[RMDB]
RNA sequence: GGGAACGACUCGAGUAGAGUCGAAAAGCGCAUCGCGCGGGGCACCGCGUGCAACCCCACACGGCAGCUGGUCCCUGGCCGUGGCCACCGCUUCCAGCCCGCGGGGCCCGCCACGCACACGUGGUGCGACCUCUGUGGCGACUUCAUCUGGGGCGUAGCUAAUACGAUCGUUCGCGAUCGUAUUAGCAAAAGAAACAACAACAACAAC
Reactivity to 2A3 in 0.01 (KOAc 150mM, MgCl2 10mM, bicine 150mM(pH8.5), 24C), signal-to-noise 2, nucleotides 027 to 156: g070c060g020c070a070u140c070g000c010g000c020g010g010g010g020c140a070c160c000g000c000g010u050g020c020a040a110c020c010c000c000a020c010a020c050g040g000c010a010g030c000u070g050g010u070c040c030c000u060g120g120c000c010g030u040g030g000c040c050a100c080c010g070c030u300u100c020c040a040g000c030c000c040g000c010g000g000g010g010c010c050c000g000c020c010a030c020g080c010a060c030a040c140g000u000g020g010u010g010c050g070a160c010c000u010c080u180g010u020g020g020c100g060a070c020u170u110c110a100u020c030u010g000g000g000g000c000g020u020a020